Chemical mapping of a 177-nucleotide RNA with 2A3 and DMS.
For DMS, 1,169 sequencing reads were counted.
Conditions: 150 mM KOAc, 10 mM MgCl2 and 150 mM bicine (pH 8.5), 24 C.
For DMS the reverse transcriptase was MarathonRT.
RNA sequence: GGGAACGACUCGAGUAGAGUCGAAAACCUCUAGUAUUCGUACUAGAGGCACAUGCCGCCCCAACGGCUUCCUGACGGGGCGGAUUCACUUAAAAUGGAGCAAAGCCGCUGUGUUCGCACAGCGGAACUGCAUCGAAGUAUUCGUACUUCGAUGCAGAAAAGAAACAACAACAACAAC
Reactivity to 2A3 in 0.01 (KOAc 150mM, MgCl2 10mM, bicine 150mM(pH8.5), 24C), signal-to-noise 2, nucleotides 027 to 126: c010c000u010c000u000a000g010u000a010u060u050c220g020u030a000c000u000a000g000a010g000g040c030a010c010a080u180g030c000c000g000c000c020c000c010a020a060c050g080g000c000u160u090c010c000u010g020a030c070g000g020g010g020c030g000g000a010u070u050c060a030c050u100u150a120a020a110a120u260g020g000a020g010c010a060a060a000g100c010c000g000c020u010g000u020g030u040u080c200g030c110a000c000a000g000c040g000g000a000a010
Reactivity to DMS in 0.01 (KOAc 150mM, MgCl2 10mM, bicine 150mM(pH8.5), 24C), signal-to-noise 2, nucleotides 027 to 126: c000c010u000c000u000a000g000u000a000u000u030c190g030u000a000c010u000a020g010a030g010g010c060a060c110a100u000g000c000c000g020c010c010c000c000a040a300c070g000g000c040u000u000c000c000u010g020a140c300g000g030g030g000c000g000g000a010u000u000c070a070c120u000u000a070a110a080a090u000g000g000a030g000c080a130a140a190g010c000c000g000c020u000g040u000g000u000u000c190g000c000a010c000a010g000c010g010g000a020a010